[RMDB]
The record gives the reactivity of an RNA of 207 nucleotides to 2A3 and DMS. DMS adducts were read by reverse transcription with MarathonRT. Values cover nucleotides 27 to 156. For DMS, 2,202 sequencing reads were counted. The 2A3 profile rests on 831 reads. Source: RMDB library OK3TST, as collected in RNAgym. The reactions ran in a buffer of 150 mM KOAc, 10 mM MgCl2 and 150 mM bicine (pH 8.5), at 24 C.
RNA sequence: GGGAACGACUCGAGUAGAGUCGAAAACUAAUAGGAUCCUUAGGACACUGUGGGCUUUAGGAAUGACUAUAGAUGCUCACACGUGUUUAAAGUGACAUUUGGAGAUGCUCUCAGUCCUGUGGCAUCUGGCACGAAGUCUCCAAGAAGCCACUUUGCAUGGCGCAUAAAUAUUCGUAUUUAUGCGCCAAAAAGAAACAACAACAACAAC
Reactivity to 2A3 in 0.01 (KOAc 150mM, MgCl2 10mM, bicine 150mM(pH8.5), 24C), signal-to-noise 2, nucleotides 027 to 156: c010u080a100a090u110a140g080g100a120u060c000c010u050u140a080g090g000a000c000a000c000u000g000u040g030g000g020c000u130u020u030a090g040g090a300a130u120g030a070c020u030a040u030a100g200a130u240g040c000u020c000a000c000a010c070g000u000g000u040u000u030a010a040a000g010u010g010a000c030a110u030u000u030g040g000a060g000a030u250g010c060u000c000u010c060a060g000u100c050c020u100g020u110g070g010c050a150u070c130u010g020g010c030a010c080g070a070a000g000u000c000u000c020c030a020a000g120a040a000g020c020c090a000c000u050u050u010g030c060a030
Reactivity to DMS in 0.01 (KOAc 150mM, MgCl2 10mM, bicine 150mM(pH8.5), 24C), signal-to-noise 1, nucleotides 027 to 156: c000u000a090a090u000a160g020g000a140u000c000c020u000u000a230g010g010a060c000a030c010u000g000u000g030g000g060c000u020u000u000a050g000g010a180a160u020g010a120c110u020a130u010a090g040a100u010g020c020u000c000a020c030a020c140g020u000g020u010u000u000a050a090a040g020u020g000a030c000a270u000u010u000g030g000a030g000a100u000g000c100u000c090u020c050a180g010u010c010c020u000g050u010g000g040c060a130u000c030u000g020g000c050a150c110g000a030a140g010u010c010u000c010c000a020a070g010a140a140g040c000c010a040c010u010u000u000g000c080a210